This 177-nucleotide RNA was probed chemically with DMS.
DMS adducts were read by reverse transcription with MarathonRT.
DMS (dimethyl sulfate) methylates the pairing face of unpaired adenines and cytosines.
The RNA was probed in 150 mM KOAc, 10 mM MgCl2 and 150 mM bicine (pH 8.5) at 24 C.
The DMS profile rests on 1,496 reads.
[RMDB]
RNA sequence: GGGAACGACUCGAGUAGAGUCGAAAACCCCGCGGCACACUCCUUCCCCCCUGCGGGCCCCCCCAUAAGAUGGCAGGAACCCACUCAUUGGGGUCCGCUGUUCCAUUCUUUCUUACCUUGUGGCCGGGUCUUCUAUAUAGUUCGCUAUAUAGAAGACAAAAGAAACAACAACAACAAC
Reactivity to DMS in 0.01 (KOAc 150mM, MgCl2 10mM, bicine 150mM(pH8.5), 24C), signal-to-noise 2, nucleotides 027 to 126: c060c000c000c120g020c020g000g000c040a030c030a080c040u010c040c030u000u000c050c010c000c020c020c040u010g020c070g010g000g010c000c000c020c010c090c010c040a070u010a040a070g010a090u010g000g000c020a090g010g010a050a060c040c000c010a060c190u010c100a190u010u010g040g020g000g000u000c000c000g000c050u020g010u010u010c050c010a040u000u010c030u000u000u000c100u000u000a130c100c060u010u000g020u000g030g030c000c000g010g000